[RMDB]
RNA sequence: GGGAACGACUCGAGUAGAGUCGAAAAGCAACAUAGAUCGUUCUAUUAACGAACACGCGCGGAUCGUCGGUGGUCGGCGAGCCCACGGACGUACUUGAUCGCGCGAACGAGUAAAAAUCCCCGGCAAACGUAUUAUUUGGUUCGCCAAAUAAUACGUAAAAGAAACAACAACAACAAC
Reactivity to 2A3 in 0.01 (KOAc 150mM, MgCl2 10mM, bicine 150mM(pH8.5), 24C), signal-to-noise 7, nucleotides 027 to 126: g050c020a010a070c030a100u180a080g120a140u070c060g040u060u020c060u080a230u190u180a110a040c070g020a020a010c050a020c080g010c000g000c010g030g030a070u070c010g030u010c060g160g010u010g000g010u020c010g020g070c130g020a020g010c010c000c000a010c020g090g000a000c010g010u070a050c030u080u210g040a090u210c010g000c010g010c000g020a000a010c010g010a010g030u100a020a080a040a030a100u050c000c000c010c000g050g010c060a120a100
Reactivity to DMS in 0.01 (KOAc 150mM, MgCl2 10mM, bicine 150mM(pH8.5), 24C), signal-to-noise 8, nucleotides 027 to 126: g010c100a070a080c120a110u000a070g010a080u000c080g010u010u010c050u000a220u010u000a080a080c080g010a040a070c120a130c020g020c010g010c010g010g000a070u000c000g020u000c000g000g040u000g000g010u000c040g010g030c160g010a140g010c200c000c000a020c010g010g010a020c020g010u000a050c170u010u000g020a080u000c010g010c010g020c030g010a020a050c060g000a080g010u010a010a050a070a100a100u000c020c000c000c100g020g000c160a050a090